Structure probing data (2A3 and DMS) for a 177-nucleotide construct.
It was measured as part of the RMDB libraries RFM100 and RFMREP.
2A3 adducts were read by reverse transcription with SuperScript II with manganese.
[RMDB]
RNA sequence: GGGAACGACUCGAGUAGAGUCGAAAAGUAUGUCGUUGUCAACGUCGACCGAGCGUCCGUGCCAAGCGCUGCGUCACCAGGGGAUGACUGUCGGAAGAUGGUCAGUCCCGGGUGCAUAAGGAGUGGUAUACAGGAAAUUUUUCGAAAUUUCCUGUAUAAAAGAAACAACAACAACAAC
Reactivity to 2A3 in 0.01 (KOAc 150mM, MgCl2 10mM, bicine 150mM(pH8.5), 24C), signal-to-noise 3, nucleotides 027 to 126: g090u050a100u210g050u000c060g010u030u060g090u040c050a050a060c040g040u030c020g030a060c010c020g010a030g030c010g030u040c020c010g030u030g030c010c010a050a030g020c040g000c050u060g040c030g050u060c000a000c000c000a030g000g000g040g000a010u020g000a020c000u010g010u010c010g040g100a070a040g000a100u020g020g000u000c000a000g060u020c000c000c000g030g000g000u010g000c010a040u040a070a030g070g000a050g030u050g000g020u040
Reactivity to DMS in 0.01 (KOAc 150mM, MgCl2 10mM, bicine 150mM(pH8.5), 24C), signal-to-noise 5, nucleotides 027 to 126: g020u000a050u000g020u000c020g020u000u010g000u000c060a080a110c090g010u010c050g000a070c030c040g010a080g020c040g010u010c040c050g020u010g020c050c030a080a120g010c040g000c020u000g000c110g010u010c000a020c010c010a060g010g020g000g000a160u000g000a010c000u010g010u000c000g000g070a140a150g000a010u000g010g000u000c000a010g000u010c000c000c000g000g010g000u010g010c110a060u020a070a110g000g010a110g010u010g010g010u010